[RMDB]
RNA sequence: GGGAACGACUCGAGUAGAGUCGAAAAGAAGGACAUAACGCGAAGCAGCAGAGAGAAGACUGGAGUGACGCGAAUCACUAGACGUCAACGACGGCAAGAGAGAGCCGAAGGAGACGAUCCUUAGGAGCAGCGCAUGACUAUUCGUAGUCAUGCGCUGAAAAGAAACAACAACAACAAC
Reactivity to 2A3 in 0.01 (KOAc 150mM, MgCl2 10mM, bicine 150mM(pH8.5), 24C), signal-to-noise 2, nucleotides 027 to 126: g020a010a050g020g020a010c010a050u130a140a030c130g020c060g070a020a000g000c020a000g110c000a000g070a010g030a000g000a180a030g060a030c030u020g090g050a070g030u110g000a040c040g000c000g050a000a030u090c010a000c040u080a010g020a010c000g000u000c000a030a000c000g050a000c010g000g070c040a070a000g070a020g000a020g010a030g070c000c000g000a010a000g020g000a000g000a020c030g140a270u040c000c000u000u060a040g030g000a060g000
Reactivity to DMS in 0.01 (KOAc 150mM, MgCl2 10mM, bicine 150mM(pH8.5), 24C), signal-to-noise 1, nucleotides 027 to 126: g050a240a050g000g000a010c130a070u010a260a080c060g000c000g000a070a300g000c030a030g000c030a060g000a020g100a050g000a070a240g000a030c080u000g090g000a250g010u000g000a110c010g000c030g060a110a170u000c090a090c060u020a030g000a050c000g000u000c000a030a300c060g000a180c110g000g010c010a000a040g020a250g050a240g030a150g000c000c000g020a000a200g000g000a070g000a050c030g000a020u000c080c010u000u000a050g000g000a060g000